[RMDB]
RNA sequence: GGGAACGACUCGAGUAGAGUCGAAAAGUGUGGUUCGCCACACGCAUUCGGGCCGAUGCCGAAGUUGGUUAAUGGGGCGGAUUGUAAAUCCGCUGGUUACGCCUACGUUGGUUCGAAUCCGACUCGGCCCACCAUCGUCUGCUCGUUCGCGAGCAAACAGUUGGUAGGGUUUCGACCCUACCAACUGAAAAGAAACAACAACAACAAC
Reactivity to 2A3 in 0.01 (KOAc 150mM, MgCl2 10mM, bicine 150mM(pH8.5), 24C), signal-to-noise 2, nucleotides 027 to 156: g000u040g000u000g000g050u070u130c160g030c020c000a020c000a000c000g000c020a120u160u200c030g000g000g000c000c000g010a020u070g040c040c000g040a070a020g010u070u010g000g000u030u040a060a050u150g090g000g060g080c010g000g010a010u030u170g140u270a110a140a090u000c000c000g000c010u000g000g030u030u000a010c070g010c020c000u010a020c010g120u060u080g000g020u020u110c040g060a040a180u080c030c030g060a010c010u000c000g000g000c000c000c000a020c010c010a110u120c040g140u000c060u040g020c000u000c000g000u080u050c150g010c030g070a000g000c000a060a030a010
Source information:
This 207-nucleotide RNA was probed chemically with 2A3. The RNA was probed in 150 mM KOAc, 10 mM MgCl2 and 150 mM bicine (pH 8.5) at 24 C. For 2A3 the reverse transcriptase was SuperScript II with manganese. The data come from the RNA Mapping Database (RMDB), library ARCHII.